The record gives the reactivity of an RNA of 177 nucleotides to DMS and 2A3. The reactions ran in a buffer of 150 mM KOAc, 10 mM MgCl2 and 150 mM bicine (pH 8.5), at 24 C. It was measured as part of the RMDB library OK2TST. The 2A3 profile rests on 1,230 reads.
RNA sequence: GGGAACGACUCGAGUAGAGUCGAAAAAGCCGGUCCCCGAUGGUGACUACACCGACGAUCCCAACGUGCUGAAGGUCAGGGGCAUGGUCGAAAAGCCCAAGGCCGAAACGGCGCCGUCGAGGUAUGCGCAGCUACCGAGAUUCGUCUCGGUAGCUGCAAAAGAAACAACAACAACAAC
Reactivity to DMS in 0.01 (KOAc 150mM, MgCl2 10mM, bicine 150mM(pH8.5), 24C), signal-to-noise 2, nucleotides 027 to 126: a060g040c050c020g000g000u010c000c000c000c010g000a030u010g050g010u010g000a140c130u010a090c070a050c000c010g030a010c030g000a200u010c000c010c020a150a160c170g010u000g040c000u000g000a120a250g020g000u000c030a070g020g000g000g000c000a060u010g030g040u000c180g010a090a060a240a140g000c000c000c010a060a000g020g030c000c000g000a010a090a110c110g000g000c000g020c020c000g000u000c050g030a060g000g020u020a010u010g000c150
Reactivity to 2A3 in 0.01 (KOAc 150mM, MgCl2 10mM, bicine 150mM(pH8.5), 24C), signal-to-noise 1, nucleotides 027 to 126: a000g080c050c000g040g050u130c000c020c000c040g070a040u100g050g060u090g000a000c030u030a050c080a030c020c000g050a030c030g000a060u010c000c010c000a010a040c050g030u110g020c050u020g000a070a020g010g020u010c030a020g030g010g010g000c010a050u150g070g070u150c060g080a060a020a070a030g000c000c020c000a010a040g040g000c000c020g070a010a070a010c050g000g040c050g010c010c000g000u050c000g040a060g030g050u070a080u150g000c070